Record summary:
Chemical mapping of a 177-nucleotide RNA with 2A3. The reactions ran in a buffer of 150 mM KOAc, 10 mM MgCl2 and 150 mM bicine (pH 8.5), at 24 C.
[RMDB]
RNA sequence: GGGAACGACUCGAGUAGAGUCGAAAAGAAUUGGUAUGUAAGCUACAUCUUCCGGUAGCUGCGUCACACUUUAAGAGUGUGCAUACUGAGCCGAAGCUCAGCUUCGGUCCCCCAAGGGAAGAUCAAAGCGGUCCAGUCAUUUCGAUGACUGGACCGCAAAAGAAACAACAACAACAAC
Reactivity to 2A3 in 0.01 (KOAc 150mM, MgCl2 10mM, bicine 150mM(pH8.5), 24C), signal-to-noise 1, nucleotides 027 to 126: g120a030a130u000u000g000g000u010a000u000g000u000a000a000g000c000u000a000c000a300u210c000u000u000c000c000g000g000u000a000g010c000u000g000c000g000u000c000a000c000a000c000u000u080u300a300a000g030a000g170u000g030u000g000c000a000u050a000c000u060g000a000g000c000c000g000a000a000g000c000u010c300a090g000c000u120u000c000g000g000u000c000c000c000c030c000a010a050g150g020g030a000a000g000a000u100c150a000a020a000